[RMDB]
RNA sequence: GGGAACGACUCGAGUAGAGUCGAAAAAGAAAAAGAGGACGGGUCCUUCUCGUCAGCAUUAGAAGUUUUUGCUCGAGAUGAACGGCAGAUACCCCAGUUAAACAAGGCUCCGUCUGUCGAACGUCGACAUGGAUGCGAGUUUCGACUCGCAUCCAUGAAAAGAAACAACAACAACAAC
Reactivity to 2A3 in 0.01 (KOAc 150mM, MgCl2 10mM, bicine 150mM(pH8.5), 24C), signal-to-noise 3, nucleotides 027 to 126: a000g160a030a100a020a020a000g070a030g060g030a000c000g000g000g060u090c040c000u070u010c020u010c000g110u080c030a010g030c020a060u060u170a090g110a300a110g150u030u060u070u060u070g000c030u030c040g020a020g000a070u050g040a020a100c020g030g000c040a020g010a060u160a080c000c000c000c020a060g020u140u260a050a020a080c100a070a020g020g010c010u030c060c020g000u000c000u000g080u030c010g040a060a030c010g070u030c010g070a060
Reactivity to DMS in 0.01 (KOAc 150mM, MgCl2 10mM, bicine 150mM(pH8.5), 24C), signal-to-noise 2, nucleotides 027 to 126: a200g040a080a010a030a170a090g030a100g000g000a050c040g000g040g030u070c110c030u000u060c000u050c000g030u030c090a040g000c000a050u000u060a040g000a100a150g000u000u000u000u000u000g000c010u010c080g000a070g070a030u060g000a030a300c000g020g010c060a020g000a020u000a120c140c170c010c030a190g020u010u010a030a160a080c290a040a080g000g000c020u010c060c120g000u020c000u030g000u000c000g010a060a300c080g000u000c010g010a180